[RMDB]
RNA sequence: GGGAACGACUCGAGUAGAGUCGAAAAACGUUGAUAUGGAUUUACUCCGAGGAGCCGAACUACCACGAACAGGGGAAACUCUACCCGUGGCGUCUCCGUUUGACGAGUAAGUCCUAAGUCAACAUGCGGCCUGCUCGCUUCGGCGAGCAGAAAAGAAACAACAACAACAAC
Reactivity to 2A3 in 0.01 (KOAc 150mM, MgCl2 10mM, bicine 150mM(pH8.5), 24C), signal-to-noise 2, nucleotides 027 to 129: a000c090g000u000u000g000a010u010a000u030g000g000a000u000u000u000a010c010u000c000c000g000a030g000g000a000g020c000c000g010a000a000c020u130a070c210c010a000c000g000a060a030c040a070g000g000g020g000a000a000a000c020u000c000u000a040c020c020c000g000u000g000g000c000g000u000c000u000c000c000g020u160u140u110g000a000c010g000a000g000u000a000a000g010u000c000c000u000a000a000g000u000c000a000a000c010a000u140g010c030g040g020c000
Reactivity to DMS in 0.01 (KOAc 150mM, MgCl2 10mM, bicine 150mM(pH8.5), 24C), signal-to-noise 3, nucleotides 027 to 129: a100c210g000u000u020g010a040u000a060u130g030g010a000u000u020u020a070c000u060c000c090g020a100g020g040a010g030c280c040g010a080a050c060u080a300c150c000a000c070g010a070a290c230a100g030g000g040g070a000a000a000c000u020c000u000a080c130c060c000g030u010g000g040c010g060u010c010u030c000c010g000u000u000u000g080a300c300g000a010g000u020a000a010g010u080c030c000u020a000a040g010u040c010a040a010c040a100u130g030c130g000g000c050